[RMDB]
RNA sequence: GGGAACGACUCGAGUAGAGUCGAAAAGAAAGAAAGAAAUGAUGAAAUAUUUCGGAUGUAAACUCACAGACCUGUUCUGAAUGCGCAAAACCGUGUAGAGAUUUCCGUUGCCUUCCUUCUGAUGAAACUCCAUUUAGAUUUUCGAAUCUAAAUGGAGAAAAGAAACAACAACAACAAC
Reactivity to 2A3 in 0.01 (KOAc 150mM, MgCl2 10mM, bicine 150mM(pH8.5), 24C), signal-to-noise 7, nucleotides 027 to 126: g060a000a040a000g060a020a070a010g070a020a090a030u120g090a030u110g060a080a100a050u180a070u040u060u020c010g020g000a010u060g030u130a090a070a020c020u020c030a030c000a030g040a060c000c030u050g050u050u010c010u020g090a140a050u090g020c030g000c030a010a070a050a100c040c030g030u050g040u120a020g030a010g010a100u060u030u000c020c020g030u030u050g020c010c000u010u030c020c000u040u030c020u050g100a120u060g040a070a030a020
Reactivity to DMS in 0.01 (KOAc 150mM, MgCl2 10mM, bicine 150mM(pH8.5), 24C), signal-to-noise 8, nucleotides 027 to 126: g020a080a060a060g010a070a090a080g010a040a050a040u010g010a080u020g010a110a130a100u020a050u000u000u000c000g000g020a130u030g000u010a060a080a110c060u010c030a070c070a060g010a070c060c060u010g000u010u000c050u010g010a060a070u020g020c070g010c060a040a040a070a070c090c050g000u010g010u020a080g010a120g000a080u020u010u000c020c040g020u000u010g010c030c030u000u000c030c010u000u010c030u010g000a100u010g000a080a070a090
Chemical mapping of a 177-nucleotide RNA with 2A3 and DMS.
For 2A3 the reverse transcriptase was SuperScript II with manganese.
The RNA was probed in 150 mM KOAc, 10 mM MgCl2 and 150 mM bicine (pH 8.5) at 24 C.